[RMDB]
RNA sequence: GGGAACGACUCGAGUAGAGUCGAAAAAUGCCAUUCGUGGCAUAACGGGGGGGUCACGCUGGAGAUCGACCUUUUGACGAGCUGAAGCCUCCACGGCUCGAUAAGGCGAUCGUUGAAAGCGUGACGGAGGCACCCUACAAACUGGGUUCGCCCAGAACUCACGAGAAUAUUUCGAUAUUCUCGUGAGAAAAGAAACAACAACAACAAC
Reactivity to DMS in 0.01 (KOAc 150mM, MgCl2 10mM, bicine 150mM(pH8.5), 24C), signal-to-noise 3, nucleotides 027 to 156: a060u000g030c010c010a070u010u000c200g040u000g020g020c010a040u000a040a100c140g010g000g020g030g060g020g040u010c010a020c040g020c030u030g020g010a130g050a040u000c010g010a120c010c000u000u000u010u020g010a250c100g010a040g010c000u000g000a060a090g010c000c000u010c020c020a300c060g000g000c010u000c000g000a140u010a080a040g000g020c050g010a020u000c000g020u000u000g010a190a200a120g020c000g010u000g020a000c000g030g010a040g050g030c050a100c020c010c010u000a300c080a090a090a110c090u010g020g000g000u000u010c160g020c000c010c000a040g000a120a180
Reactivity to 2A3 in 0.01 (KOAc 150mM, MgCl2 10mM, bicine 150mM(pH8.5), 24C), signal-to-noise 5, nucleotides 027 to 156: a000u000g010c010c000a030u060u110c300g120u100g000g000c020a020u040a100a090c140g000g010g000g000g000g000g000u010c000a000c000g000c000u010g000g010a010g010a010u000c010g080a300c030c000u090u050u050u120g100a070c060g000a000g000c000u000g010a140a010g020c010c000u000c000c000a020c000g000g000c000u000c010g070a090u040a150a010g000g000c010g000a010u030c000g010u040u010g000a000a000a010g000c000g000u000g000a000c000g000g000a000g000g000c000a040c000c000c000u060a080c090a070a200a050c010u010g000g000g060u060u050c210g080c030c010c010a010g010a040a030